[RMDB]
RNA sequence: GGGAACGACUCGAGUAGAGUCGAAAAACAAAAAUAAAACGAAAGUCAACGUGCACCGUAACGUAUUCCAAUGGGGGGAGCUGUUGUUUCCCGUUACAUGAGGGGGAGAAGCAGAAGUAGGAGGAGGCUAUAAAACGACUUUCGAGUCGUUUUAUAGAAAAGAAACAACAACAACAAC
Reactivity to DMS in 0.01 (KOAc 150mM, MgCl2 10mM, bicine 150mM(pH8.5), 24C), signal-to-noise 4, nucleotides 027 to 126: a090c090a060a070a070a040a060u010a070a050a050a080c090g000a070a090a100g010u000c060a060a040c080g010u000g010c050a110c080c080g020u010a050a040c070g020u000a090u000u010c040c030a070a090u000g020g010g020g010g000g010a060g000c060u000g010u000u000g000u000u000u000c010c020c010g010u010u010a070c150a070u000g010a060g020g000g000g010g000a050g000a050a050g000c060a020g000a050a070g010u000a060g000g010a070g000g000a070g020g000
Reactivity to 2A3 in 0.01 (KOAc 150mM, MgCl2 10mM, bicine 150mM(pH8.5), 24C), signal-to-noise 2, nucleotides 027 to 126: a000c020a000a090a010a010a000u300a020a130a020a060c060g050a040a090a030g090u090c070a060a020c070g020u040g010c000a040c110c000g110u070a050a000c010g020u000a090u090u000c020c020a060a090u160g000g000g010g030g000g000a020g030c040u050g000u090u030g030u000u060u010c000c030c000g050u080u120a030c040a090u120g040a110g000g000g000g000g000a050g010a020a000g000c030a020g010a110a000g040u040a010g000g050a020g030g020a020g020g000

Chemical mapping of a 177-nucleotide RNA with DMS and 2A3. For 2A3 the reverse transcriptase was SuperScript II with manganese. For DMS the reverse transcriptase was MarathonRT. For 2A3, 1,497 sequencing reads were counted. It was measured as part of the RMDB library OK2TST. Reactivities are given for positions 27 through 126.